[RMDB]
RNA sequence: GGGAACGACUCGAGUAGAGUCGAAAACAGGAUAUUGCUCCUAGUGCGGUUAUUUCUCCACAGGCAACGCUGGGUGAGAAUAUUUCUAUCGGUGCAAAUGCAGUGAUAGAGUCCGGUGUAGUGCUGGGGUUAUUUACAACUUCGGUUGUAAAUAACCAAAAGAAACAACAACAACAAC
Reactivity to 2A3 in 0.01 (KOAc 150mM, MgCl2 10mM, bicine 150mM(pH8.5), 24C), signal-to-noise 3, nucleotides 027 to 126: c030a000g000g050a040u080a080u160u300g060c040u030c020c000u010a040g060u020g080c090g050g110u100u050a080u060u070u000c020u000c010c030a050c020a060g050g000c020a020a050c010g020c010u020g000g010g060u060g050a110g050a080a100u100a150u090u150u000c020u010a000u030c020g070g030u000g000c010a080a300a300u230g000c010a160g300u000g030a000u010a010g000a010g020u000c000c000g020g000u020g010u020a100g040u030g080c010u030g000g050
Reactivity to DMS in 0.01 (KOAc 150mM, MgCl2 10mM, bicine 150mM(pH8.5), 24C), signal-to-noise 3, nucleotides 027 to 126: c090a110g000g010a070u010a100u010u000g020c100u000c030c020u010a060g010u000g030c140g020g020u000u010a080u000u010u010c020u000c020c050a150c090a110g000g000c020a100a040c130g020c030u000g000g000g020u000g010a090g000a080a080u010a070u000u000u010c010u000a010u010c010g010g010u000g010c000a180a110a140u010g010c000a010g000u000g000a020u000a020g000a030g010u000c040c010g010g000u000g010u000a070g030u000g010c020u010g000g010